[RMDB]
RNA sequence: GGGAACGACUCGAGUAGAGUCGAAAAGUUGUGACAGGUAAUGUUGUAAAACAGUGUUGCACUGCUGCUGUUGAUUUAAGUAUGGAUAAGUUGCGCCGUGUGGAUUGGAAAUCAACCCUACGGUUGUGCAUACUGUAUCGUUCGCGAUACAGUAUGCAAAAGAAACAACAACAACAAC
Reactivity to DMS in 0.01 (KOAc 150mM, MgCl2 10mM, bicine 150mM(pH8.5), 24C), signal-to-noise 2, nucleotides 027 to 126: g010u010u000g020u000g010a100c050a050g020g000u000a080a120u000g010u000u010g000u010a080a080a060a070c070a050g000u010g020u010u000g030c000a050c070u000g030c040u000g020c010u010g000u000u000g000a070u000u000u000a050a130g000u030a030u000g000g020a220u010a050a120g040u010u010g000c070g000c040c000g000u000g030u010g020g000a040u000u000g010g000a110a090a150u000c020a040a020c040c020c020u000a060c040g000g010u000u000g030u000
Chemical mapping of a 177-nucleotide RNA with DMS. For DMS the reverse transcriptase was MarathonRT. It was measured as part of the RMDB library 15KREP.